[RMDB]
RNA sequence: GGGAACGACUCGAGUAGAGUCGAAAACCAAAUCCUAAGGACAUUUUAUUGUCUAUGGAUGCAGUUCAGCGACUAGACGGCAGUGGGUAUUGUAGAGAUAUGGGGUUAUUUAUGGCCUUAUCUACAAUGCUUAAGGUAUAGUCUAAUCUCUUUCGAAUCAAUAUAGUUACUUCGGUAACUAUAUUGAAAAAGAAACAACAACAACAAC
Reactivity to DMS in 0.01 (KOAc 150mM, MgCl2 10mM, bicine 150mM(pH8.5), 24C), signal-to-noise 3, nucleotides 027 to 156: c010c010a110a200a030u000c010c010u000a170a200g010g000a010c000a030u000u020u000u000a120u010u010g020u000c000u000a300u010g000g010a030u010g030c130a090g020u010u010c070a130g020c120g020a040c010u010a020g000a050c000g020g010c020a080g030u000g000g010g000u010a020u000u000g010u040a030g010a120g010a160u010a140u000g020g010g010g040u000u000a060u010u000u000a130u030g010g000c010c010u010u000a060u010c000u000a010c020a030a040u000g010c000u010u000a020a040g000g010u010a110u000a070g010u000c020u000a020a030u000c010u000c040u000u010u000c010g010a190a300
Reactivity to 2A3 in 0.01 (KOAc 150mM, MgCl2 10mM, bicine 150mM(pH8.5), 24C), signal-to-noise 7, nucleotides 027 to 156: c010c000a040a040a030u010c010c000u050a090a080g050g000a010c010a010u100u190u170u300a230u300u110g000u000c000u020a040u070g000g010a000u020g050c060a040g030u100u190c040a030g030c010g070a020c030u010a010g000a010c010g020g000c030a050g040u050g020g010g000u020a000u010u000g000u000a010g010a000g020a090u060a150u300g050g000g000g030u080u040a140u120u290u110a180u300g080g000c010c000u030u030a030u000c000u000a000c000a000a000u000g000c000u000u010a010a010g030g010u060a070u160a250g010u000c000u010a020a050u030c050u010c030u030u090u050c040g060a040a050
Structure probing data (DMS and 2A3) for a 207-nucleotide construct. For DMS the reverse transcriptase was MarathonRT. For 2A3 the reverse transcriptase was SuperScript II with manganese. For 2A3, 4,805 sequencing reads were counted. Source: RMDB library ARCHII, as collected in RNAgym. Conditions: 150 mM KOAc, 10 mM MgCl2 and 150 mM bicine (pH 8.5), 24 C.